Description
This 177-nucleotide RNA was probed chemically with DMS and 2A3. It was measured as part of the RMDB library OK2TST. The reactions ran in a buffer of 150 mM KOAc, 10 mM MgCl2 and 150 mM bicine (pH 8.5), at 24 C. The DMS profile rests on 575 reads.

[RMDB]
RNA sequence: GGGAACGACUCGAGUAGAGUCGAAAAGUGAAUGCAUGUAGAAUGGCACUUGAUCUUCUAAGAAAUCCAUUCUGUUCAAUUGUGCGUCCUACCAUUAACUUAAGACAAUAUGCUGAUCUAGCAUAUCGAAGGACACAUGCUUCGGCAUGUGUCCUUCAAAAGAAACAACAACAACAAC
Reactivity to DMS in 0.01 (KOAc 150mM, MgCl2 10mM, bicine 150mM(pH8.5), 24C), signal-to-noise 1, nucleotides 027 to 126: g020u000g040a070a030u000g000c060a020u020g000u000a030g000a000a040u000g000g000c300a070c050u000u000g010a070u010c100u000u010c170u000a140a080g020a050a070a060u000c040c010a050u000u000c000u000g000u000u010c090a020a120u000u000g020u000g000c020g090u000c030c030u000a270c050c010a080u000u000a110a050c150u000u000a030a160g000a090c290a030a010u010a000u010g030c020u000g020a140u000c140u050a070g000c000a020u040a000u000c050
Reactivity to 2A3 in 0.01 (KOAc 150mM, MgCl2 10mM, bicine 150mM(pH8.5), 24C), signal-to-noise 2, nucleotides 027 to 126: g140u090g000a120a020u010g010c140a020u060g000u060a000g000a000a040u000g060g050c010a020c030u010u090g010a050u130c080u290u080c090u160a140a020g060a020a050a030u130c000c000a090u000u000c000u020g040u020u130c070a090a120u250u100g000u020g080c000g020u020c000c000u000a060c030c000a080u120u150a070a120c010u060u090a060a060g080a050c090a090a060u000a010u040g040c020u030g050a290u190c030u170a000g000c000a010u010a020u030c040